Structure probing data (2A3 and DMS) for a 177-nucleotide construct.
[RMDB]
RNA sequence: GGGAACGACUCGAGUAGAGUCGAAAACCGUAUCGGUUCGCCGAUACGGAAAAGUUAAUGCUGCUAAGACACAUCUUAAGCAUGGCGGUGGUAUCGCUGGUGGGACUCCCCAGUUCGCUGGGGAGAAGUAUGGACUUACGUUCGCGUAAGUCCAUACAAAAGAAACAACAACAACAAC
Reactivity to 2A3 in 0.01 (KOAc 150mM, MgCl2 10mM, bicine 150mM(pH8.5), 24C), signal-to-noise 2, nucleotides 027 to 126: c000c010g000u010a010u000c000g000g010u030u060c150g090c040c000g000a000u010a000c000g000g010a020a090a030a000g070u090u120a130a000u150g040c030u000g040c070u060a060a000g070a040c050a000c010a280u080c030u060u070a120a040g030c040a060u050g020g000c030g010g030u090g080g060u030a030u140c060g020c060u060g000g060u080g030g040g000a050c010u010c000c000c000c000a000g010u060u060c200g010c060u020g010g000g000g010a000g000a000a000
Reactivity to DMS in 0.01 (KOAc 150mM, MgCl2 10mM, bicine 150mM(pH8.5), 24C), signal-to-noise 3, nucleotides 027 to 126: c010c000g000u000a020u010c000g000g020u000u000c240g060c000c000g000a010u000a000c010g000g010a010a010a050a110g000u020u000a070a090u000g000c020u000g020c080u020a030a080g000a100c190a090c160a080u010c060u000u000a050a090g030c030a050u000g000g000c040g020g010u010g000g000u000a070u010c080g020c030u000g000g020u000g010g010g000a270c030u010c000c000c000c000a020g010u010u000c170g000c000u000g000g000g010g000a000g010a000a030

DMS adducts were read by reverse transcription with MarathonRT. Values are in units of 0.01, from 0 to 300, in steps of 10. In probing experiments dimethyl sulfate is read out at A N1 and C N3, which are open when not base-paired. The RNA was probed in 150 mM KOAc, 10 mM MgCl2 and 150 mM bicine (pH 8.5) at 24 C.